[RMDB]
Chemical mapping of a 177-nucleotide RNA with 2A3 and DMS.
RNA sequence: GGGAACGACUCGAGUAGAGUCGAAAAAUAAGACUUACACCUAGAGGAUCAUGCCACAACCUGCGACCACGAAUGCGAAGCAUGUUCCUAGCCUAUCCCCACUCAAUUACUGUCGCAGUGCUGAGGCGUACGUGCGAGGGUUCGCCCUCGCACGUACAAAAGAAACAACAACAACAAC
Reactivity to 2A3 in 0.01 (KOAc 150mM, MgCl2 10mM, bicine 150mM(pH8.5), 24C), signal-to-noise 3, nucleotides 027 to 126: a000u230a030a010g020a020c040u030u060a030c070a060c050c020u020a000g010a030g120g000a020u030c050a060u130g000c000c000a080c020a040a100c000c020u050g030c000g040a060c000c060a110c260g120a110a040u160g010c060g090a080a000g010c000a000u050g010u010u000c000c000u020a000g000c060c010u020a070u060c020c000c000c000a020c000u030c000a030a110u090u070a110c020u040g030u090c020g070c060a010g020u010g050c040u030g060a050g000g120c060
Reactivity to DMS in 0.01 (KOAc 150mM, MgCl2 10mM, bicine 150mM(pH8.5), 24C), signal-to-noise 1, nucleotides 027 to 126: a070u050a160a140g060a170c030u000u010a120c110a070c080c120u000a090g050a240g020g010a010u040c060a060u000g000c050c000a140c030a080a000c140c020u000g000c040g000a040c090c000a190c050g000a020a140u000g010c030g000a040a000g010c000a060u030g000u000u000c000c000u000a000g000c000c010u000a160u000c010c000c000c130a050c060u030c040a060a050u030u060a080c090u000g000u000c050g000c000a000g000u000g010c000u000g000a120g120g000c030
Values cover nucleotides 27 to 126. For 2A3, 1,229 sequencing reads were counted. Reactivities are rounded to 0.1 and cut off at 0 and 3. It was measured as part of the RMDB library OK1LIB. The reactions ran in a buffer of 150 mM KOAc, 10 mM MgCl2 and 150 mM bicine (pH 8.5), at 24 C.